[RMDB]
RNA sequence: GGGAACGACUCGAGUAGAGUCGAAAAGAAAAUAAGAGCGUAAUCGCGUCUUGACGUGAGUGAGCCCACACGAAUAGCUAUCCCAAGUGGGAUAGCAUAGCUCACAAUACGCUAAGAUUCGUGUGAACAUAGGUAGGCUCUUCGGAGCCUACCUAUGAAAAGAAACAACAACAACAAC
Reactivity to 2A3 in 0.01 (KOAc 150mM, MgCl2 10mM, bicine 150mM(pH8.5), 24C), signal-to-noise 5, nucleotides 027 to 126: g020a010a040a000a050u270a070a040g020a020g030c020g010u020a060a030u050c010g000c000g030u010c100u100u160g120a030c010g020u000g020a050g010u010g020a010g020c000c010c020a020c000a000c000g010a000a010u010a020g000c000u000a000u020c000c000c030a220a160g240u300g070g000g000a000u000a000g000c020a010u000a000g000c010u020c010a020c010a010a080u110a030c020g000c020u020a060a010g030a120u020u000c000g000u020g000u000g020a020a010
Reactivity to DMS in 0.01 (KOAc 150mM, MgCl2 10mM, bicine 150mM(pH8.5), 24C), signal-to-noise 3, nucleotides 027 to 126: g020a100a080a130a090u010a140a050g000a050g040c000g030u010a060a300u010c030g000c000g010u000c030u010u030g000a050c000g020u000g000a070g000u000g000a020g000c050c210c040a020c010a000c010g000a030a000u000a070g010c000u020a000u010c010c030c000a300a230g070u050g000g020g000a000u000a000g000c000a030u020a000g000c030u000c040a040c090a120a070u000a010c040g000c000u000a050a030g010a090u000u000c000g000u000g000u000g010a190a190
The record gives the reactivity of an RNA of 177 nucleotides to 2A3 and DMS. For 2A3 the reverse transcriptase was SuperScript II with manganese. The reactions ran in a buffer of 150 mM KOAc, 10 mM MgCl2 and 150 mM bicine (pH 8.5), at 24 C. It was measured as part of the RMDB library OK1LIB. For DMS, 3,728 sequencing reads were counted.